[RMDB]
Source information:
The record gives the reactivity of an RNA of 207 nucleotides to 2A3 and DMS. The 2A3 profile rests on 2,543 reads.
RNA sequence: GGGAACGACUCGAGUAGAGUCGAAAACAGACGUGUACCUCCUCCACCCAUCCAGGUGACUGUGGCGUGUUUUGCUUGGUAAGCCCUGACUCUGGGCCUGGCACCAUUUCACCUGCUUUUCCUCUUGAAACUGAGCCUGGGAUGCUGGAAUUGACAGCUUUGGUAUACCUUUCGAGGUAUACCAAAGAAAAGAAACAACAACAACAAC
Reactivity to 2A3 in 0.01 (KOAc 150mM, MgCl2 10mM, bicine 150mM(pH8.5), 24C), signal-to-noise 4, nucleotides 027 to 156: c040a000g180a070c060g110u120g040u140a070c010c010u030c000c010u000c020c010a020c020c020c000a040u040c010c010a010g010g030u030g030a050c070u030g000u040g060g020c070g030u060g070u030u110u080u080g030c000u030u060g030g040u120a110a070g010c000c000c020u090g050a190c070u050c120u190g010g000g000c000c000u000g010g020c010a020c020c010a030u040u050u010c030a030c010c020u010g060c020u020u050u040u030c020c010u080c020u070u090g070a090a080a060c040u040g000a010g030c000c010u040g010g040g010a020u050g020c050u040g010g060a110a090u040u090g050a050c030a010g030
Reactivity to DMS in 0.01 (KOAc 150mM, MgCl2 10mM, bicine 150mM(pH8.5), 24C), signal-to-noise 2, nucleotides 027 to 156: c060a110g020a060c060g030u000g000u000a090c060c030u010c020c020u000c040c030a070c030c050c000a130u080c090c030a070g030g020u000g010a080c080u020g000u010g020g030c000g000u010g020u000u000u000u010g010c030u000u000g020g000u000a100a100g000c010c000c030u000g010a100c110u000c050u000g000g020g030c000c000u000g020g000c030a060c060c010a120u000u000u000c020a060c030c010u000g020c030u000u000u000u000c010c020u000c050u020u000g000a110a090a080c080u010g010a130g030c040c010u000g000g020g000a110u010g000c030u000g000g000a090a130u000u010g000a130c150a130g020
For DMS, 5,945 sequencing reads were counted.